[RMDB]
RNA sequence: GGGAACGACUCGAGUAGAGUCGAAAAUAUCAAGCUGAUCCGUUCUGCCUGUCCGUUUAGGAUCAGCGAGGGACAGGAUGACCUCUCCGAGAGGAGUAAAAUGGUCUGUGCGACGACGUAUGACCGGACCGCUUAGUCGUCGCUUAGGUCCGGGAGAAUAUGGAGCAGUAUUCGUACUGCUCCAUAUAAAAGAAACAACAACAACAAC
Reactivity to 2A3 in 0.01 (KOAc 150mM, MgCl2 10mM, bicine 150mM(pH8.5), 24C), signal-to-noise 3, nucleotides 027 to 156: u170a030u070c060a050a030g000c010u010g000a040u020c020c000g080u240u110c080u080g100c030c020u040g040u090c030c020g070u020u080u180a090g010g010a070u030c010a010g000c000g010a060g020g000g020a000c010a010g050g040a100u120g010a000c000c020u020c010u000c030c020g030a030g010a050g040g050a000g010u160a000a050a030a060u210g010g000u020c000u030g050u060g000c010g000a000c000g000a000c010g120u130a070u170g040a070c030c010g010g060a010c010c040g020c050u030u040a010g020u040c020g010u010c010g000c010u020u090a010g000g000u000c000c000g020g010g020a060g020a040
Reactivity to DMS in 0.01 (KOAc 150mM, MgCl2 10mM, bicine 150mM(pH8.5), 24C), signal-to-noise 3, nucleotides 027 to 156: u000a100u000c070a080a130g030c010u000g000a010u000c000c010g030u010u000c070u010g030c030c020u000g010u010c010c010g020u000u000u000a140g030g010a040u000c000a020g010c010g010a050g020g010g010a110c030a070g040g020a120u000g010a050c020c010u010c000u000c020c010g020a300g020a280g010g000a070g020u000a040a050a080a120u030g000g020u000c000u000g020u000g030c000g000a090c000g000a040c030g000u010a100u010g000a110c040c020g030g020a100c040c050g020c050u010u000a120g020u000c020g020u000c020g030c030u000u000a040g010g010u000c010c010g000g010g010a140g010a100